[RMDB]
An RNA of 177 nucleotides, treated with 2A3 and DMS and read out base by base. The reactions ran in a buffer of 150 mM KOAc, 10 mM MgCl2 and 150 mM bicine (pH 8.5), at 24 C.

RNA sequence: GGGAACGACUCGAGUAGAGUCGAAAACUGGAAGUCGGUGCGGCCGAUGUACUCGAGCACGCCGUCGGCGUUCCAGCGCACCAGGUCACCGGUGCGGUACAUGCGCUCGCCGGGCCCGCCGACCGGACCAGGUAGUGCCAUUCGUGGCACUACCUGGAAAAGAAACAACAACAACAAC
Reactivity to 2A3 in 0.01 (KOAc 150mM, MgCl2 10mM, bicine 150mM(pH8.5), 24C), signal-to-noise 1, nucleotides 027 to 126: c010u050g070g100a080a020g040u020c030g000g000u030g070c160g020g060c020c030g020a060u100g030u130a080c000u030c090g040a010g060c010a020c090g030c060c030g170u130c050g000g000c060g080u130u000c030c010a010g070c010g000c000a050c020c000a030g100g080u140c050a030c200c080g000g010u040g010c030g000g030u080a050c040a090u210g090c030g000c110u110c050g060c060c000g040g030g000c000c000c000g000c010c010g040a000c000c020g040g040a030
Reactivity to DMS in 0.01 (KOAc 150mM, MgCl2 10mM, bicine 150mM(pH8.5), 24C), signal-to-noise 1, nucleotides 027 to 126: c020u000g000g010a190a050g030u000c020g010g000u000g000c080g040g030c020c000g000a110u020g010u000a120c150u000c030g000a080g010c010a070c010g040c070c170g030u010c110g010g020c000g020u000u000c060c030a100g000c040g000c020a010c040c000a090g000g000u000c170a150c080c010g020g010u010g000c000g010g020u020a030c080a080u000g020c040g020c040u010c020g020c220c080g010g000g000c000c010c000g010c000c010g000a020c000c060g020g000a120